RNA sequence: GGGAACGACUCGAGUAGAGUCGAAAAGUCCGUCAGCCCGAGCUAGCUCUCGACUCGGAUCCUGGCGUCAUCUAUAGAGCCACUGCUCGCAGUCCUCGUCACCGGGGCUGCGGGGACUUUCAGGUGACUGAGCCCGUCCGCAUCUUGUCUGCGUGAGGAAGAGACUCAUGUUCGCAUGAGUCUCUUCAAAAGAAACAACAACAACAAC
Reactivity to 2A3 in 0.01 (KOAc 150mM, MgCl2 10mM, bicine 150mM(pH8.5), 24C), signal-to-noise 2, nucleotides 027 to 156: g160u020c020c010g000u000c010a000g000c020c040c020g010a000g010c010u080a050g000c000u020c000u070c080g070a110c010u000c030g050g020a030u120c020c030u000g000g000c000g140u140c040a080u030c070u250a190u080a150g010a000g020c020c020a020c040u030g000c020u000c000g030c000a000g020u020c000c000u010c050g030u000c000a000c040c020g010g000g000g000c000u020g000c000g000g000g010g010a000c010u070u270u180c130a030g000g000u000g000a000c000u000g010a030g020c050c050c050g050u030c020c000g010c010a030u050c030u150u210g060u070c070u040g040c020g050u100g070a060g000
An RNA of 207 nucleotides, treated with 2A3 and read out base by base. For 2A3 the reverse transcriptase was SuperScript II with manganese.